[RMDB]
RNA sequence: GGGAACGACUCGAGUAGAGUCGAAAAUACUAGAGCUCCUGGGAAUGCAUGGCCAGUGACACAAGUGAGAAUUGGAUGUUAUGACCGUCCAGAAAAGACAAGAUGAGAAAGUGCAGUAUUGACUGUCCUACAAAUUAGACUUCGGUCUAAUUUGUAGAAAAGAAACAACAACAACAAC
Reactivity to 2A3 in 0.01 (KOAc 150mM, MgCl2 10mM, bicine 150mM(pH8.5), 24C), signal-to-noise 4, nucleotides 027 to 126: u070a010c020u030a030g020a020g110c010u000c040c010u030g010g020g010a160a090u100g050c050a040u030g050g000c010c000a010g030u020g060a030c010a000c000a080a090g070u070g070a090g030a080a150u090u020g020g030a030u020g040u090u130a150u160g060a050c050c020g020u000c000c000a030g070a040a060a000a000g040a040c040a040a030g040a090u140g040a020g080a150a100a000g050u080g040c020a010g030u040a120u090u110g040a030c030u030g020u080c010
Reactivity to DMS in 0.01 (KOAc 150mM, MgCl2 10mM, bicine 150mM(pH8.5), 24C), signal-to-noise 4, nucleotides 027 to 126: u000a080c040u000a110g010a100g020c050u000c040c030u000g010g010g000a090a060u000g010c100a030u010g010g010c030c020a060g010u010g010a080c060a070c110a070a060g010u000g000a130g020a090a120u000u000g010g010a080u010g010u000u010a090u010g010a110c160c060g010u000c030c020a060g000a060a040a070a110g000a070c070a060a070g010a110u000g010a110g010a060a050a070g010u000g010c030a030g000u000a140u010u010g000a060c050u000g000u000c100